[RMDB]
RNA sequence: GGGAACGACUCGAGUAGAGUCGAAAAUGAGGCCCUGCGUAAGGUCACCCCAGAGGGCGUGACUCCGUACUAUGAGAACUUCAACUGGGCGUGGAUAUGGUGCCAUCUCCUCUGGCAGUUCGGGGGAAGCACUCCUUAGGUUCGCCUAAGGAGUGCUAAAAGAAACAACAACAACAAC
Reactivity to DMS in 0.01 (KOAc 150mM, MgCl2 10mM, bicine 150mM(pH8.5), 24C), signal-to-noise 2, nucleotides 027 to 126: u020g010a110g010g030c050c000c010u000g000c110g030u000a110a040g010g010u020c000a070c070c050c000c020a130g020a130g010g010g020c240g010u000g000a040c010u000c070c060g030u010a090c130u030a090u010g010a090g000a170a050c080u000u020c090a040a040c160u000g000g000g020c120g010u000g000g000a090u000a100u020g010g000u010g010c010c030a050u000c020u000c020c020u000c080u000g010g000c080a050g020u000u010c040g000g020g030g020g000a120
Reactivity to 2A3 in 0.01 (KOAc 150mM, MgCl2 10mM, bicine 150mM(pH8.5), 24C), signal-to-noise 1, nucleotides 027 to 126: u160g010a080g100g080c010c010c000u000g040c040g080u140a110a070g070g010u010c000a040c040c020c030c080a070g090a230g080g000g000c070g000u010g020a050c000u000c060c030g090u060a080c030u040a110u220g060a030g010a110a020c000u060u060c050a070a070c090u030g020g040g000c000g020u010g080g000a070u050a080u210g070g040u070g000c010c010a040u030c050u010c050c010u020c060u010g020g070c050a040g050u060u080c040g030g010g010g000g030a000
The record gives the reactivity of an RNA of 177 nucleotides to DMS and 2A3. DMS adducts were read by reverse transcription with MarathonRT. Source: RMDB library OK2TST, as collected in RNAgym.